[RMDB]
RNA sequence: GGGAACGACUCGAGUAGAGUCGAAAAAAGCCGGAGUGGCAGGUCGAGGCGCCGCUGGCCUCGUUAAAAGCGGCACAAAUGUAAUUGCCAACAACGAUUACGAAUACGCAAUGGCAGCCUAAUUAGGCUUGCCGCACUGAUUGGCUGACGUCAGAUAGUUAAUUAGAAUGUUCGCAUUCUAAUUAACAAAAGAAACAACAACAACAAC
Reactivity to 2A3 in 0.01 (KOAc 150mM, MgCl2 10mM, bicine 150mM(pH8.5), 24C), signal-to-noise 7, nucleotides 027 to 156: a000a000g040c030c020g030g010a100g020u050g010g010c010a000g000g020u050c020g030a020g020g000c010g020c020c010g000c010u020g030g040c000c020u020c030g030u010u030a030a050a010a010g000c000g010g020c030a000c030a050a060a010u210g010u090a010a050u040u040g020c040c040a060a040c050a050a030c100g050a020u100u100a020c030g040a020a100u170a080c070g010c100a050a100u090g020g000c020a020g000c010c000u140a220a220u100u160a060g000g000c000u000u080g010c000c000g000c000a030c010u060g020a130u130u110g020g000c010u020g020a030c050g030u040c010a020g010a150u130a070
Reactivity to DMS in 0.01 (KOAc 150mM, MgCl2 10mM, bicine 150mM(pH8.5), 24C), signal-to-noise 3, nucleotides 027 to 156: a070a050g030c030c030g030g010a120g070u000g020g030c010a040g010g020u000c010g020a050g030g040c040g020c010c020g020c020u010g000g000c060c020u000c080g000u010u020a020a060a130a090g020c010g000g020c010a110c060a040a120a130u000g020u010a010a010u000u000g000c000c010a130a140c060a080a060c020g010a010u000u000a050c000g010a150a120u000a060c070g010c050a070a090u000g010g010c020a070g040c020c010u000a110a140u000u000a090g020g000c040u000u010g010c010c000g010c060a030c060u000g000a100u000u000g020g010c020u000g000a110c090g020u000c040a060g010a130u000a150